[RMDB]
RNA sequence: GGGAACGACUCGAGUAGAGUCGAAAAGUUUCAUGACAUGUCGGCGUGAAUCAAGAACAAAGUGCAUGUCCGCUUGUUGAAAUUAAUAAACCUAAGUUCAAGGAGAGGUGGGAUAGUGGUGCGGUAACAUAGUCCGGUAAUUCGUUACCGGACUAUGAAAAGAAACAACAACAACAAC
Reactivity to DMS in 0.01 (KOAc 150mM, MgCl2 10mM, bicine 150mM(pH8.5), 24C), signal-to-noise 7, nucleotides 027 to 126: g000u000u000u000c010a080u030g010a030c020a010u000g020u040c020g000g000c060g000u000g010a090a100u020c140a110a130g020a180a100c230a060a170a120g000u000g000c010a020u010g000u040c010c040g000c020u010u010g000u000u000g000a030a030a030u000u010a050a150u030a060a100a130c050c010u010a050a070g010u020u010c090a100a100g010g000a100g000a070g000g000u000g000g000g010a090u020a070g010u020g000g000u010g000c080g010g000u000a080a150
Reactivity to 2A3 in 0.01 (KOAc 150mM, MgCl2 10mM, bicine 150mM(pH8.5), 24C), signal-to-noise 5, nucleotides 027 to 126: g040u020u010u020c070a080u110g050a020c010a020u010g080u210c010g020g050c010g000u000g100a170a140u160c130a100a050g100a170a060c090a060a080a020g090u090g060c000a010u030g050u050c000c000g000c010u020u020g020u020u040g070a040a030a000u100u110a030a040u140a120a020a000c000c060u060a140a050g030u070u100c080a080a000g030g000a040g020a020g010g130u170g020g000g000a060u050a070g050u070g030g030u070g030c050g000g050u080a060a020
This 177-nucleotide RNA was probed chemically with DMS and 2A3. It was measured as part of the RMDB library OK1LIB. 2A3 adducts were read by reverse transcription with SuperScript II with manganese. The RNA was probed in 150 mM KOAc, 10 mM MgCl2 and 150 mM bicine (pH 8.5) at 24 C.